Overview: This 177-nucleotide RNA was probed chemically with 2A3 and DMS. In probing experiments dimethyl sulfate is read out at A N1 and C N3, which are open when not base-paired. It was measured as part of the RMDB libraries RFM100 and RFMREP. The RNA was probed in 150 mM KOAc, 10 mM MgCl2 and 150 mM bicine (pH 8.5) at 24 C. As a SHAPE reagent, 2A3 marks flexible, mostly unpaired nucleotides at the ribose 2'-OH. For DMS the reverse transcriptase was MarathonRT.
RNA sequence: GGGAACGACUCGAGUAGAGUCGAAAAGACAACUCAAGACUAAAACCGAAGACCGCAGGGGUCUGGCUGAGACAUAAUCUUCCUGCCGAGGUUUGCGAAGUCCAUCCGUUGCGAUUGGGCGAUCGCCUCGUCCAUUCUAUUUCGAUAGAAUGGACGAAAAAGAAACAACAACAACAAC
Reactivity to 2A3 in 0.01 (KOAc 150mM, MgCl2 10mM, bicine 150mM(pH8.5), 24C), signal-to-noise 9, nucleotides 027 to 126: g040a020c040a070a060c070u050c100a070a060g070a140c050u160a080a060a060a010c010c020g070a090a010g020a030c020c030g000c030a020g000g020g000g040u000c010u010g060g060c090u140g050a010g030a050c030a030u150a050a050u100c090u260u120c040c010u010g010c020c010g030a030g030g020u050u040u080g010c010g010a010a010g010u000c000c000a010u000c010c050g280u180u230g060c130g040a020u080u170g010g000g000c030g080a210u030c000g010c010c010
Reactivity to DMS in 0.01 (KOAc 150mM, MgCl2 10mM, bicine 150mM(pH8.5), 24C), signal-to-noise 8, nucleotides 027 to 126: g010a070c150a090a120c040u010c070a090a070g000a130c110u010a080a040a060a060c010c030g020a100a090g000a040c300c300g020c060a020g000g000g030g000u000c020u010g010g010c150u020g010a090g010a030c030a040u010a040a020u010c220u020u010c010c010u010g000c010c050g000a090g000g010u000u000u010g010c020g000a030a280g010u000c000c010a050u000c010c030g020u030u020g010c130g000a050u020u020g010g000g000c000g000a060u000c010g000c020c230